[RMDB]
RNA sequence: GGGAACGACUCGAGUAGAGUCGAAAAGACGCAACGAGUGCGCGUCAAGGUAGGUACUCCGGAAUCUACCAGUACUCGAUUUGAUCUCGGAAUGCCAUUUUGAGAUCAAUGGUAUUCCAACCGGAGAGGGAUCGAAGAUCUUCGGAUCUUCGAUCCCAAAAGAAACAACAACAACAAC
Reactivity to 2A3 in 0.01 (KOAc 150mM, MgCl2 10mM, bicine 150mM(pH8.5), 24C), signal-to-noise 3, nucleotides 027 to 126: g040a000c010g010c050a170a250c070g000a000g000u020g000c000g000c000g040u010c090a020a000g010g000u000a000g000g050u090a110c010u000c000c000g000g040a000a030u000c000u000a000c000c000a000g010u000a000c000u000c040g080a160u090u030u290g150a160u040c120u030c130g000g000a010a000u010g050c000c040a000u060u000u060u290g300a300g040a080u120c000a000a000u010g000g000u010a020u000u010c000c000a010a000c010c000g010g000a000g000a010
An RNA of 177 nucleotides, treated with 2A3 and read out base by base. For 2A3, 1,222 sequencing reads were counted. The RNA was probed in 150 mM KOAc, 10 mM MgCl2 and 150 mM bicine (pH 8.5) at 24 C. Values cover nucleotides 27 to 126.